RNA sequence: GGGAACGACUCGAGUAGAGUCGAAAAGAUAUGGAGUAUAUUAGCUUUUGACGUCUCAGUAUCGGAAACGAUACAUGAGACGAUAAGCUAUAUACUCCUAAGUCAAAACACGGCGUUCGCGCCGUGACUACUAUAUCGUGUUCGCACGAUAUAGUAGAAAAGAAACAACAACAACAAC
Reactivity to 2A3 in 0.01 (KOAc 150mM, MgCl2 10mM, bicine 150mM(pH8.5), 24C), signal-to-noise 8, nucleotides 027 to 126: g020a000u040a030u110g000g000a000g020u000a010u010a020u130u300a030g050c020u140u170u170u300g300a250c110g000u010c000u000c000a010g010u010a000u000c000g010g000a030a030a010c020g000a010u010a030c080a280u030g000a000g000a000c000g000a000u010a020a000g000c000u000a000u000a000u000a010c000u010c000c000u000a000a000g000u000c000a020a000a080a080c010a000c000g010g000c010g030u080u110c290g020c000g000c160c000g000u000g000a020
Reactivity to DMS in 0.01 (KOAc 150mM, MgCl2 10mM, bicine 150mM(pH8.5), 24C), signal-to-noise 7, nucleotides 027 to 126: g010a020u000a300u010g000g010a030g010u000a000u000a000u010u010a000g010c010u000u000u010u010g020a260c130g010u010c000u000c000a030g000u000a000u000c000g010g000a080a050a110c000g010a010u000a000c000a090u000g010a010g010a010c000g010a020u010a010a020g010c000u000a010u000a010u000a010c000u000c000c000u000a010a080g000u010c020a110a100a150a240c020a010c000g010g010c000g010u010u010c270g020c030g030c000c000g020u000g000a150